This 207-nucleotide RNA was probed chemically with DMS and 2A3. DMS adducts were read by reverse transcription with MarathonRT. The reactions ran in a buffer of 150 mM KOAc, 10 mM MgCl2 and 150 mM bicine (pH 8.5), at 24 C. The data come from the RNA Mapping Database (RMDB), library OK3TST. The 2A3 profile rests on 617 reads.
RNA sequence: GGGAACGACUCGAGUAGAGUCGAAAAGGACUGGACCAGGACCACAGGUACCGCCGGACCCAUAUAAGGUACCAACCAGAAUAAGACAGAUACAGAAUGGGCAGCACAUUGUAGCCAGUCAGAAACGCGUGCCUAGUCUACGGCACGAGUGAGCUAAGACCCUAUAAUAGUUCGCUAUUAUAGGGUCAAAAGAAACAACAACAACAAC
Reactivity to DMS in 0.01 (KOAc 150mM, MgCl2 10mM, bicine 150mM(pH8.5), 24C), signal-to-noise 2, nucleotides 027 to 156: g030g000a120c030u000g000g000a090c050c070a150g020g010a220c010c040a080c010a060g000g050u000a050c010c030g010c060c000g030g000a140c040c010c020a060u000a060u000a080a170g020g000u000a070c040c060a070a090c060c040a150g000a080a070u000a020a130g000a100c050a030g020a080u000a140c030a070g000a150a080u010g020g010g000c040a090g010c010a060c030a060u000u000g000u000a080g080c040c000a040g010u000c020a070g010a050a100a030c020g030c020g000u000g010c000c000u010a220g020u020c090u000a170c190g000g000c000a040c010g030a010g070u000g010a170g000c130u010a160a300
Reactivity to 2A3 in 0.01 (KOAc 150mM, MgCl2 10mM, bicine 150mM(pH8.5), 24C), signal-to-noise 1, nucleotides 027 to 156: g030g000a000c030u000g000g000a000c000c040a040g000g010a010c000c000a050c070a050g030g000u020a100c000c040g010c010c010g010g050a050c000c000c000a020u030a000u010a110a010g000g000u040a040c010c000a010a000c010c010a030g130a280a130u160a230a040g030a010c000a030g110a000u100a090c040a000g030a070a040u110g040g050g060c010a010g060c000a000c000a000u030u110g050u040a000g010c000c030a010g020u010c000a010g110a010a020a000c040g000c000g000u000g000c010c000u050a000g020u080c070u160a040c140g000g020c010a000c000g000a000g040u100g010a000g000c000u000a070a070